[RMDB]
RNA sequence: GGGAACGACUCGAGUAGAGUCGAAAAGGGCGAUACCGGGCCCGAUACCGGAAUUAGUAGUUUUCUACGAGAGGCCCAAUCUGCGGCCGAAUGCAGUGUAGGUCGAAACGAGGACCGAGACUCGAUAAUUACGUCGAUAGAUGGACGAUUCCAUCAAACCACCUAGUAUGUUCGCAUACUAGGUGGUAAAAGAAACAACAACAACAAC
Reactivity to 2A3 in 0.01 (KOAc 150mM, MgCl2 10mM, bicine 150mM(pH8.5), 24C), signal-to-noise 1, nucleotides 027 to 156: g000g010g000c010g050a020u000a080c000c040g000g000g000c080c040c000g040a010u030a010c020c010g000g000a020a060u110u070a060g010u020a040g000u100u050u010u100c030u100a060c020g010a020g030a020g080g050c000c000c000a000a090u010c010u040g030c090g040g000c020c020g030a070a020u090g000c040a010g010u000g010u140a020g010g010u010c020g020a030a050a050c040g020a080g000g030a000c020c000g010a010g010a000c020u000c000g000a010u090a140a050u100u140a020c020g030u030c010g030a050u070a240g010a010u010g000g000a020c060g040a040u120u000c020c000a000u030c000a030a100
Reactivity to DMS in 0.01 (KOAc 150mM, MgCl2 10mM, bicine 150mM(pH8.5), 24C), signal-to-noise 1, nucleotides 027 to 156: g000g000g030c000g000a120u000a050c050c020g010g040g000c060c010c060g040a100u000a030c010c000g040g020a130a080u000u000a090g000u000a010g000u000u000u010u000c010u000a030c040g050a100g000a200g070g000c020c020c020a070a170u000c090u000g000c010g010g040c000c200g000a050a090u010g000c110a080g040u000g020u010a070g000g000u000c000g000a080a030a080c080g000a230g000g000a080c000c040g000a100g010a120c010u020c020g000a100u000a010a030u000u010a100c080g030u000c000g030a100u010a170g000a020u000g000g000a200c090g000a300u020u010c000c000a030u010c040a010a110
Chemical mapping of a 207-nucleotide RNA with 2A3 and DMS. The 2A3 profile rests on 1,025 reads. The DMS profile rests on 1,896 reads.